Chemical mapping of a 177-nucleotide RNA with 2A3 and DMS. The data come from the RNA Mapping Database (RMDB), library OK2TRN. The reactions ran in a buffer of 150 mM KOAc, 10 mM MgCl2 and 150 mM bicine (pH 8.5), at 24 C. For DMS, 1,089 sequencing reads were counted.
[RMDB]
RNA sequence: GGGAACGACUCGAGUAGAGUCGAAAACAAUUUAGACAAAGGCCAGAGCAGCCAAUCAAGAAGGUGAGCAAAACAUUCUUCUAUAGCUAGUAAGUCCCUGUAGGCGCUAGGCCUAAUGAAGAGGGAGCAGUACACGCUGAUUCGUCAGCGUGUACUGAAAAGAAACAACAACAACAAC
Reactivity to 2A3 in 0.01 (KOAc 150mM, MgCl2 10mM, bicine 150mM(pH8.5), 24C), signal-to-noise 2, nucleotides 027 to 126: c010a080a130u210u230u300a110g070a090c050a060a250a000g050g000c000c000a020g030a010g080c050a010g010c020c000a020a060u100c080a080a040g080a020a000g020g000u010g010a030g060c100a010a020a020a100c020a010u300u070c030u020u000c010u060a060u110a070g040c020u030a010g050u090a060a140g060u100c000c010c030u060g110u080a070g010g000c010g060c100u090a030g120g040c000c010u040a020a090u110g080a050a000g020a110g080g000g000a000g000
Reactivity to DMS in 0.01 (KOAc 150mM, MgCl2 10mM, bicine 150mM(pH8.5), 24C), signal-to-noise 2, nucleotides 027 to 126: c040a130a130u010u000u020a110g000a130c150a060a160a070g000g000c000c000a070g010a040g000c030a130g010c040c040a090a100u000c130a080a080g010a040a060g000g010u000g030a090g000c190a090a150a070a070c010a070u000u010c000u000u000c020u000a030u010a070g020c060u000a060g000u000a060a100g000u000c000c000c000u010g050u000a080g010g010c010g000c050u000a160g030g000c010c000u000a030a070u000g000a060a070g020a050g010g000g000a200g010